[RMDB]
RNA sequence: GGGAACGACUCGAGUAGAGUCGAAAAUGGCGGAGUCCUAGGCACCACAGCUCCUCGUGAUGUCCAAGCAAUGGCAAAGUCCUAGGCAUCACAUCUUCGGGCGAUGCCGAAUCAAUGGCGGCCUAGGCAAGAAUAUCGACUUCGGUCGAUAUUCUUGAAAAGAAACAACAACAACAAC
Reactivity to 2A3 in 0.01 (KOAc 150mM, MgCl2 10mM, bicine 150mM(pH8.5), 24C), signal-to-noise 2, nucleotides 027 to 126: u130g050g010c050g000g050a020g030u030c000c000u010a010g000g000c020a020c040c000a040c020a010g010c000u060c010c000u020c040g010u010g000a020u010g020u020c010c020a000a030g030c010a030a140u300g010g030c200a300a290a040g050u080c000c010u000a000g010g000c000a000u000c000a000c010a050u070c040u100u100c000g050g030g000c090g060a080u160g000c000c000g000a000a030u180c030a030a180u170g020g000c030g010g000c020c010u000a010g000g020
Reactivity to DMS in 0.01 (KOAc 150mM, MgCl2 10mM, bicine 150mM(pH8.5), 24C), signal-to-noise 3, nucleotides 027 to 126: u010g000g010c070g020g020a080g000u000c010c010u000a050g010g030c000a200c010c000a040c100a100g010c070u000c010c050u020c130g010u000g010a020u010g010u000c000c140a140a090g010c100a070a080u010g000g010c060a190a080a170g000u010c020c010u000a080g010g010c010a000u000c020a030c010a090u010c100u000u000c080g010g000g010c080g020a100u000g000c000c000g010a040a010u010c150a100a110u000g010g010c050g020g000c010c010u000a010g010g010
Notes:
An RNA of 177 nucleotides, treated with 2A3 and DMS and read out base by base. Conditions: 150 mM KOAc, 10 mM MgCl2 and 150 mM bicine (pH 8.5), 24 C. For 2A3, 1,992 sequencing reads were counted. It was measured as part of the RMDB library VIROID. The DMS profile rests on 2,465 reads.